This 207-nucleotide RNA was probed chemically with DMS and 2A3. The 2A3 profile rests on 8,435 reads. The data come from the RNA Mapping Database (RMDB), library OK3TST. Reactivities are given for positions 27 through 156.
[RMDB]
RNA sequence: GGGAACGACUCGAGUAGAGUCGAAAAGGUACGUAAUGCCGCAGCAACCGUAAACACGCCUAGUGUGCUUUACGGCACCAGGUCUGCGACACCUGGAGUGGUUGCAACUGCUGGUGCUCCUCUUCAUGUGAGGUUUCCGGCUUUCUCACCCGCAGUGACUGAUGAAUUUAUUCGUAAAUUCAUCAGUAAAAGAAACAACAACAACAAC
Reactivity to DMS in 0.01 (KOAc 150mM, MgCl2 10mM, bicine 150mM(pH8.5), 24C), signal-to-noise 4, nucleotides 027 to 156: g020g030u010a050c100g020u010a070a080u010g020c020c010g040c020a060g030c030a160a070c000c000g010u000a020a020a020c030a030c030g020c140c110u000a130g030u000g040u000g000c090u000u000u010a040c050g010g000c030a060c120c030a090g010g010u000c020u000g030c010g010a040c040a060c020c040u000g020g010a150g020u000g000g030u000u000g010c030a080a070c050u000g010c020u000g020g020u000g010c070u010c020c010u000c020u000u000c170a130u010g020u010g010a070g000g010u000u000u000c040c000g010g000c040u000u000u010c030u000c020a070c020c010c030g020c050a070g010u000g010
Reactivity to 2A3 in 0.01 (KOAc 150mM, MgCl2 10mM, bicine 150mM(pH8.5), 24C), signal-to-noise 3, nucleotides 027 to 156: g030g010u080a050c040g050u090a120a020u100g020c010c000g000c030a030g000c020a030a040c000c010g010u030a010a030a000c010a000c020g080c030c130u200a220g080u080g000u010g210c090u010u040u040a010c020g000g000c010a020c010c010a010g040g030u000c110u190g100c060g040a050c020a000c030c010u040g000g030a060g020u060g020g030u060u040g000c030a040a030c020u050g000c020u030g020g000u000g030c030u050c000c000u050c000u090u110c090a120u170g060u090g090a040g020g000u010u030u010c030c010g010g010c000u030u080u030c060u030c010a020c010c010c020g000c020a030g010u050g120